The data come from the RNA Mapping Database (RMDB), library OK3TST.
Chemical mapping of a 207-nucleotide RNA with 2A3 and DMS.

RNA sequence: GGGAACGACUCGAGUAGAGUCGAAAAACAGGCAAUUCUGUUCUUUCCUUGUCCCAGGCAUCCUGCACAAAGGGAAUGGGGAGAACCAGUUUGUGUCUCAGCAGCCUCCUGUCAUUGGGAGCAUCAUGGGCAAUGGGCGCCGGAGAAGCAUCUCCUAUAAAUUACGUGGAUUCGUCCACGUAAUUUAAAAAGAAACAACAACAACAAC
Reactivity to 2A3 in 0.01 (KOAc 150mM, MgCl2 10mM, bicine 150mM(pH8.5), 24C), signal-to-noise 2, nucleotides 027 to 156: a010c050a010g010g000c010a020a080u160u020c020u020g000u020u000c000u020u020u010c000c010u020u110g270u090c010c010c000a010g020g000c030a150u210c060c140u200g030c110a140c110a230a150a110g010g000g000a000a020u030g010g010g010g010a010g000a010a010c080c000a020g020u040u070u060g120u020g040u000c040u030c040a090g030c030a030g020c020c000u010c000c020u090g070u150c040a120u110u210g060g000g020a000g010c010a040u110c010a060u080g040g000g010c050a110a090u030g030g020g040c050g030c040c050g070g000a010g010a040a010g060c000a100u010c040u010c010c010u080a070
Reactivity to DMS in 0.01 (KOAc 150mM, MgCl2 10mM, bicine 150mM(pH8.5), 24C), signal-to-noise 2, nucleotides 027 to 156: a040c020a020g030g000c030a110a120u010u000c040u010g010u000u000c030u000u000u000c010c000u000u000g030u000c000c010c000a240g030g010c050a160u000c060c110u000g060c010a120c080a090a100a070g000g000g020a170a060u000g010g020g010g010a050g020a060a100c070c020a060g010u020u010u000g020u000g000u000c020u000c050a070g000c040a160g030c110c010u000c030c010u010g000u010c170a200u000u000g020g000g010a090g000c040a040u000c010a090u010g030g050g030c050a070a090u000g020g000g050c050g020c040c040g000g010a070g010a040a170g030c070a150u000c020u010c020c000u010a300

Values cover nucleotides 27 to 156.